[RMDB]
RNA sequence: GGGAACGACUCGAGUAGAGUCGAAAAGGCGCGAGCGGCGGACGUGGUUGCCGCGGGUGUGGUUGGCCUUGCCGUUGGGGCUACUGGCGCUGGGUUCGUCAAUGUUCUUCGGUGCUUACCCGUGGGCUCGCUAUUGUUAGUUCGCUAACAAUAGCGAAAAAGAAACAACAACAACAAC
Reactivity to DMS in 0.01 (KOAc 150mM, MgCl2 10mM, bicine 150mM(pH8.5), 24C), signal-to-noise 3, nucleotides 027 to 126: g010g010c020g020c070g000a070g030c040g000g010c040g010g010a080c070g020u010g010g020u010u000g020c030c030g000c040g000g010g020u000g030u000g010g010u000u010g020g010c010c030u000u000g000c030c050g010u000u010g000g010g000g010c030u000a050c090u010g000g010c020g010c030u010g010g000g000u000u000c020g000u000c260a080a100u020g000u000u000c010u010u010c030g010g010u010g000c030u000u000a080c020c020c010g020u010g010g030g010c090
Reactivity to 2A3 in 0.01 (KOAc 150mM, MgCl2 10mM, bicine 150mM(pH8.5), 24C), signal-to-noise 2, nucleotides 027 to 126: g040g000c020g000c030g050a080g020c010g070g000c030g040g040a030c060g050u100g020g000u150u120g040c010c010g000c030g020g010g030u100g010u080g030g180u070u130g050g000c010c010u010u060g020c040c010g050u050u090g050g000g000g000c020u040a070c050u040g030g000c020g000c020u030g050g030g000u040u030c020g040u050c000a080a130u170g020u060u010c000u090u100c000g000g000u010g010c010u030u100a030c030c000c000g000u080g030g010g000c010
Conditions: 150 mM KOAc, 10 mM MgCl2 and 150 mM bicine (pH 8.5), 24 C. The record gives the reactivity of an RNA of 177 nucleotides to DMS and 2A3. For DMS the reverse transcriptase was MarathonRT. For DMS, 8,006 sequencing reads were counted. Source: RMDB library OK2TRN, as collected in RNAgym.